[RMDB]
Annotation:
Source: RMDB library OK3TST, as collected in RNAgym. An RNA of 207 nucleotides, treated with DMS and 2A3 and read out base by base. Values cover nucleotides 27 to 156.
RNA sequence: GGGAACGACUCGAGUAGAGUCGAAAAAUUGUCACAGCUAAUUUGUCUAUACCUUCCAAUUGGACUACUUCAGUCCAGGUUGAGUAUUUACAAAUUACAAGCACACCUAUUUUAGUGGAUUGCUCCACUUAUGUUUGCAAUGGUAAUGUGCGCUGUGGUACGUUAAUGUAUUCGUACAUUAACGUACAAAAGAAACAACAACAACAAC
Reactivity to DMS in 0.01 (KOAc 150mM, MgCl2 10mM, bicine 150mM(pH8.5), 24C), signal-to-noise 6, nucleotides 027 to 156: a120u000u000g030u010c010a030c020a050g020c020u000a190a040u000u000u000g010u000c020u000a030u000a010c010c010u000u000c030c010a050a180u010u000g010g030a030c000u000a160c230u010u010c180a040g010u000c000c000a070g000g010u000u000g000a160g040u000a010u000u000u000a030c010a010a020a020u000u000a030c080a100a160g010c010a020c020a040c050c030u010a110u000u000u000u000a030g020u000g010g000a120u000u000g020c300u000c010c010a020c020u000u000a030u000g010u000u000u000g010c120a070a100u000g020g020u000a050a080u010g020u000g010c030g050c010u000g010u000g020
Reactivity to 2A3 in 0.01 (KOAc 150mM, MgCl2 10mM, bicine 150mM(pH8.5), 24C), signal-to-noise 9, nucleotides 027 to 156: a000u130u140g050u040c010a000c000a000g000c020u020a000a010u000u000u010g000u000c010u010a000u000a010c000c000u010u000c010c020a150a280u140u110g000g000a010c010u110a080c040u190u190c190a000g000u000c000c000a000g000g010u010u020g070a140g060u000a010u010u030u000a000c000a000a000a010u020u040a030c080a130a030g000c000a000c000a010c000c010u050a120u080u120u030u040a010g010u010g010g030a070u090u300g080c110u060c020c000a000c020u030u050a060u070g200u040u230u200g090c130a110a100u110g000g020u180a210a090u110g010u010g000c020g000c010u000g000u010g040
The DMS profile rests on 25,714 reads.